[RMDB]
Source: RMDB library OK1LIB, as collected in RNAgym. This 177-nucleotide RNA was probed chemically with 2A3 and DMS. Reactivities are given for positions 27 through 126. The 2A3 profile rests on 1,049 reads.
RNA sequence: GGGAACGACUCGAGUAGAGUCGAAAAGAAUCUCACUUGGGCGGGUGCUUUAGUGACUCUGGGGAUUUAUGCAGCGCGUAUUAGUGAGAUUAUGAAUACGUUGAAAUGAUUACGCGCAAAGUAACAAGGGAUUACAAUUGUUCGCAAUUGUAAUCCCAAAAGAAACAACAACAACAAC
Reactivity to 2A3 in 0.01 (KOAc 150mM, MgCl2 10mM, bicine 150mM(pH8.5), 24C), signal-to-noise 2, nucleotides 027 to 126: g100a020a080u000c000u010c090a010c050u020u110g000g000g080c130g000g000g110u120g000c060u110u020u050a110g050u010g130a040c000u020c020u160g000g020g000g000a010u000u070u190a150u090g000c000a010g000c000g000c000g000u000a000u000u000a090g000u000g030a000g000a000u060u070a030u090g020a000a100u230a150c020g030u280u020g010a040a140a110u090g030a110u010u000a000c010g000c000g000c000a050a060a060g010u080a000a000c070a070a170
Reactivity to DMS in 0.01 (KOAc 150mM, MgCl2 10mM, bicine 150mM(pH8.5), 24C), signal-to-noise 1, nucleotides 027 to 126: g020a010a030u000c000u000c040a030c030u010u000g000g000g000c100g010g000g010u030g060c070u000u000u000a100g000u010g000a100c010u030c060u010g030g000g000g000a180u030u000u040a030u040g040c020a210g010c000g000c000g040u000a060u020u000a070g000u010g020a130g000a020u000u000a070u020g020a120a050u040a090c190g010u000u000g010a080a070a050u010g000a100u000u000a020c000g000c000g020c000a070a050a170g000u020a020a040c240a080a120